[RMDB]
RNA sequence: GGGAACGACUCGAGUAGAGUCGAAAACGAUCUGCCGCCGGACGCGCAUGUGGUGCAGACGAUCACCAAGGCCGAGCUCAUCGGUUUCACGAUGGUGGCCAAGCCCGCAUUCGGUGACACCGUCAUCCACUAGGGUGCUGUUCGCAGCACCCUAGUGAAAAGAAACAACAACAACAAC
Reactivity to DMS in 0.01 (KOAc 150mM, MgCl2 10mM, bicine 150mM(pH8.5), 24C), signal-to-noise 2, nucleotides 027 to 126: c070g010a070u010c100u000g030c020c010g050c070c010g000g020a040c040g020c020g010c150a080u000g030u000g000g020u000g000c130a090g000a140c180g010a050u020c000a030c010c030a070a160g000g000c010c040g000a250g010c090u000c090a040u000c030g010g020u000u000u010c180a140c060g010a040u000g000g000u010g000g010c000c030a070a100g010c020c050c010g030c080a120u000u010c030g010g000u000g000a050c060a020c100c030g000u000c060a190u000c030
Reactivity to 2A3 in 0.01 (KOAc 150mM, MgCl2 10mM, bicine 150mM(pH8.5), 24C), signal-to-noise 3, nucleotides 027 to 126: c020g030a110u020c030u070g080c040c020g010c010c010g000g020a020c010g000c000g020c090a070u160g050u070g100g030u080g020c000a040g080a240c070g040a140u120c000a000c010c000a040a030g010g000c010c020g070a040g020c100u080c160a050u000c000g070g000u080u300u230c090a090c050g060a040u030g010g200u180g040g050c010c000a020a010g040c020c000c000g040c000a040u050u050c040g010g000u030g010a020c020a020c050c010g010u040c000a070u040c060
Annotation
Source: RMDB library OK2TST, as collected in RNAgym. This 177-nucleotide RNA was probed chemically with DMS and 2A3. The RNA was probed in 150 mM KOAc, 10 mM MgCl2 and 150 mM bicine (pH 8.5) at 24 C. For 2A3, 2,670 sequencing reads were counted. Values cover nucleotides 27 to 126.